RNA sequence: GGGAACGACUCGAGUAGAGUCGAAAACGCCCAAGAGUUCAUAUCGACGGCGUGGUUUGGCACCUCGAUGUCGGCUCGUCGCAUCCUGGGGCUGGAGAAGGUCCCAAGGGUCCGGCUGUUCGCCGGUCGUUAAAGUUAUGUUCGCAUAACUUUAACGAAAAGAAACAACAACAACAAC
Reactivity to 2A3 in 0.01 (KOAc 150mM, MgCl2 10mM, bicine 150mM(pH8.5), 24C), signal-to-noise 9, nucleotides 027 to 126: c020g000c000c000c000a020a010g030a010g030u190u300c120a080u210a090u190c040g020a030c020g010g000c010g000u030g070g140u050u050u060g020g000c010a030c030c000u000c010g030a050u240g010u020c000g000g010c020u010c010g160u080c060g020c070a040u030c000c000u010g010g000g000g000c010u050g070g070a230g070a230a080g060g010u020c000c000c010a030a070g010g000g000u030c010c000g000g000c030u080g070u070u060c090g020c020c000g010g030u010
Reactivity to DMS in 0.01 (KOAc 150mM, MgCl2 10mM, bicine 150mM(pH8.5), 24C), signal-to-noise 7, nucleotides 027 to 126: c070g000c010c000c010a050a300g010a040g000u010u040c210a120u040a110u000c000g010a300c300g010g010c000g030u000g000g020u000u000u000g000g010c030a120c060c020u000c020g010a040u030g010u000c020g000g010c030u000c030g010u030c100g010c160a040u010c010c010u000g000g000g010g010c000u010g000g010a170g020a170a250g000g000u000c000c000c000a040a040g010g000g000u020c040c010g000g000c300u010g000u010u000c100g010c010c020g000g000u000